[RMDB]
RNA sequence: GGGAACGACUCGAGUAGAGUCGAAAACAGAGCUGAUAGGCCAUGUACCUAUCCAAAAUGAGAUCCCAUCUUGCACACUGUGCUAAUUUGAGAUUCUCAUGCCUCCUACUUGGAGAGAUCUGGACUACUAACUGUAUGACGUUCGCGUCAUACAGAACUGCAGAUAAACGUUCGCGUUUAUCUGCAGAAAAGAAACAACAACAACAAC
Reactivity to DMS in 0.01 (KOAc 150mM, MgCl2 10mM, bicine 150mM(pH8.5), 24C), signal-to-noise 2, nucleotides 027 to 156: c040a030g010a060g030c030u050g000a000u000a000g030g020c020c030a150u000g030u000a030c000c000u000a020u000c000c130a050a040a070a050u000g000a030g000a060u000c010c000c010a000u000c090u000u010g020c000a050c040a250c210u000g010u000g000c030u000a020a050u000u000u020g010a000g010a060u000u000c010u000c000a080u000g000c090c010u010c010c020u000a120c160u000u000g020g000a080g000a110g020a060u000c050u000g010g010a200c100u000a170c260u000a070a260c000u000g000u010a000u000g000a020c010g000u000u000c290g020c040g000u000c000a020u000a000c000a020g000a020a040
Reactivity to 2A3 in 0.01 (KOAc 150mM, MgCl2 10mM, bicine 150mM(pH8.5), 24C), signal-to-noise 6, nucleotides 027 to 156: c020a000g010a020g030c080u080g020a010u000a000g010g000c080c100a180u230g050u120a090c010c000u000a000u000c010c020a030a080a020a030u010g000a010g000a010u000c010c000c000a010u000c010u020u020g000c000a010c030a080c180u250g000u010g020c050u130a040a060u000u020u010g020a030g010a050u300u040c000u000c000a010u030g020c000c000u010c010c000u130a300c120u160u290g010g000a010g000a010g010a030u010c010u040g030g040a050c040u090a060c010u080a300a050c000u010g000u000a000u000g010a000c000g020u030u020c220g010c010g110u020c000a000u000a000c000a000g000a010a020

Notes: Chemical mapping of a 207-nucleotide RNA with DMS and 2A3. Conditions: 150 mM KOAc, 10 mM MgCl2 and 150 mM bicine (pH 8.5), 24 C. It was measured as part of the RMDB library M2RFPK. For 2A3, 4,907 sequencing reads were counted. The DMS profile rests on 2,717 reads. 2A3 adducts were read by reverse transcription with SuperScript II with manganese.